[RMDB]
RNA sequence: GGGAACGACUCGAGUAGAGUCGAAAACAGGAUCUGCUCUUCAUAGGUUUCAUUCCUCAAGGUAUAGUGAAGGGGGGUUCUCUCCGGUAAAUCCAAACCUCUUGUCAUAUGUCUCUGUGAGUACAGACAUAUGAGGAAAUUUCGAUUUCCUCAUAUGAAAAGAAACAACAACAACAAC
Reactivity to 2A3 in 0.01 (KOAc 150mM, MgCl2 10mM, bicine 150mM(pH8.5), 24C), signal-to-noise 7, nucleotides 027 to 126: c040a020g020g040a040u010c010u170g110c020u070c000u070u040c030a050u050a110g050g030u080u300u210c050a050u120u100c040c010u040c050a080a090g100g010u140a100u130a200g100u050g020a020a030g010g010g010g000g010g000u030u000c060u000c010u010c040c010g030g030u080a080a070a040u040c030c020a060a030a050c030c010u040c000u080u070g070u060c030a050u060a060u220g050u010c020u000c020u060g080u040g140a050g080u080a040c010a010g020a020
Reactivity to DMS in 0.01 (KOAc 150mM, MgCl2 10mM, bicine 150mM(pH8.5), 24C), signal-to-noise 9, nucleotides 027 to 126: c190a090g000g000a050u000c020u000g010c030u000c020u000u000c040a060u000a090g010g010u010u000u010c110a130u010u010c020c010u000c130a100a090g010g010u010a060u000a110g020u010g010a050a050g000g010g000g010g000g000u000u000c040u010c070u000c050c040g010g010u010a040a060a100u010c030c040a060a080a090c070c020u000c040u000u010g000u000c030a060u000a060u000g000u000c040u000c050u000g000u000g010a130g020u010a060c070a050g010a150